[RMDB]
RNA sequence: GGGAACGACUCGAGUAGAGUCGAAAAAUCAAGAGGGCCUCUAGAAUGAGAACAGCAAUUAACUGGUUUGUAGAAUCUGGAUCUAAUCUGGGAGUUAGUAUACUUUCCAUUUUAAAAGGGCUUACUGUACUUUCUGUCGAUUCGUCGACAGAAAGUAAAAAGAAACAACAACAACAAC
Reactivity to DMS in 0.01 (KOAc 150mM, MgCl2 10mM, bicine 150mM(pH8.5), 24C), signal-to-noise 2, nucleotides 027 to 126: a080u080c050a070a060g000a170g000g000g000c040c000u010c070u000a120g030a040a110u000g000a070g010a010a020c130a020g040c140a090a080u050u040a100a030c020u010g010g040u020u020u010g000u000a090g000a080a090u020c050u000g000g020a080u000c230u010a050a040u030c070u000g000g000g000a040g020u000u000a100g040u010a030u000a300c000u000u010u010c000c000a050u000u000u010u060a000a050a070a100g000g030g010c010u000u040a070c110u010g020
Reactivity to 2A3 in 0.01 (KOAc 150mM, MgCl2 10mM, bicine 150mM(pH8.5), 24C), signal-to-noise 3, nucleotides 027 to 126: a010u120c070a060a000g040a120g050g000g020c020c000u000c030u040a020g040a080a090u140g020a100g010a190a030c030a060g050c040a020a150u060u020a090a080c020u060g140g080u140u160u140g180u070a080g060a090a060u030c030u090g020g040a020u010c010u100a090a010u020c010u030g020g000g050a020g010u000u030a090g030u010a070u020a070c000u020u040u060c000c000a000u000u000u000u060a090a250a010a060g000g040g000c010u040u070a060c030u080g010